[RMDB]
RNA sequence: GGGAACGACUCGAGUAGAGUCGAAAAAGCGGAAGGCGUGACACGCUUUAUUGUCGCAGGCGGUGAGACCUCCGGCGUAGUCACACAGAGCCUGGGAAUAAAAGGGUUUCAUAUUGGCCCAACCAUAGAUUUAGCGUAGUUUCGACUACGCUAAAUCAAAAGAAACAACAACAACAAC
Reactivity to DMS in 0.01 (KOAc 150mM, MgCl2 10mM, bicine 150mM(pH8.5), 24C), signal-to-noise 4, nucleotides 027 to 126: a060g020c090g000g010a150a060g020g010c040g040u020g000a050c050a060c030g010c030u000u010u010a070u010u020g010u010c030g010c090a030g000g000c050g000g010u000g010a090g010a110c030c040u020c100c050g010g000c060g040u000a110g010u000c010a050c020a050c040a130g000a270g030c010c010u010g010g010g010a060a030u000a040a060a080a060g010g000g010u010u010u000c070a050u000a180u000u000g010g010c030c010c020a070a120c070c060a120u010a110
Reactivity to 2A3 in 0.01 (KOAc 150mM, MgCl2 10mM, bicine 150mM(pH8.5), 24C), signal-to-noise 2, nucleotides 027 to 126: a000g090c050g050g050a040a060g020g000c050g020u040g000a000c010a000c050g100c000u140u060u050a160u160u200g150u060c100g000c170a010g020g000c010g010g030u120g050a080g040a060c020c000u050c040c000g030g000c030g020u060a070g000u000c000a000c000a010c030a050g090a010g060c000c040u090g000g030g040a050a040u080a090a060a030a030g080g010g000u030u030u130c070a030u070a110u260u170g090g000c010c000c010a020a020c060c010a080u130a110